RNA sequence: GGGAACGACUCGAGUAGAGUCGAAAAGAUUUACGGCGGGAAACGUCCCGGGUGCGCGCUGAAGUCCCGGGUGCGGCACCGACCGAAAGGCGCUGAAACGGCACCGACCGAAACCGCCGGAAAGAAAGGUGAUAGUAUACUUCGGUAUACUAUCACCAAAAGAAACAACAACAACAAC
Reactivity to 2A3 in 0.01 (KOAc 150mM, MgCl2 10mM, bicine 150mM(pH8.5), 24C), signal-to-noise 2, nucleotides 027 to 126: g020a030u090u110u100a030c010g000g000c020g000g030g080a080a110a000c000g030u010c010c000c000g030g020g000u130g030c110g010c000g000c060u100g160a180a010g060u030c030c020c030g030g010g010u040g020c010g070g010c010a030c040c020g040a010c000c000g080a060a030a010g030g000c020g000c040u060g060a190a090a090c040g020g000c030a030c120c080g040a120c010c010g000a080a050a050c000c000g000c000c000g000g040a050a040a000g090a060a060a000
Reactivity to DMS in 0.01 (KOAc 150mM, MgCl2 10mM, bicine 150mM(pH8.5), 24C), signal-to-noise 3, nucleotides 027 to 126: g000a170u010u000u000a090c010g000g000c010g000g000g000a080a090a220c080g000u000c000c020c020g000g000g030u010g040c050g000c090g030c080u000g010a090a180g020u000c020c010c020g010g010g010u000g000c010g010g000c050a050c030c060g010a120c070c070g000a030a080a110g000g000c010g010c030u000g000a060a090a140c060g000g000c010a070c060c070g000a120c050c010g000a030a100a150c000c010g000c010c000g000g000a030a060a050g000a070a060a130
An RNA of 177 nucleotides, treated with 2A3 and DMS and read out base by base. It was measured as part of the RMDB library OK2TRN. The reactions ran in a buffer of 150 mM KOAc, 10 mM MgCl2 and 150 mM bicine (pH 8.5), at 24 C. For 2A3 the reverse transcriptase was SuperScript II with manganese. The 2A3 profile rests on 2,317 reads.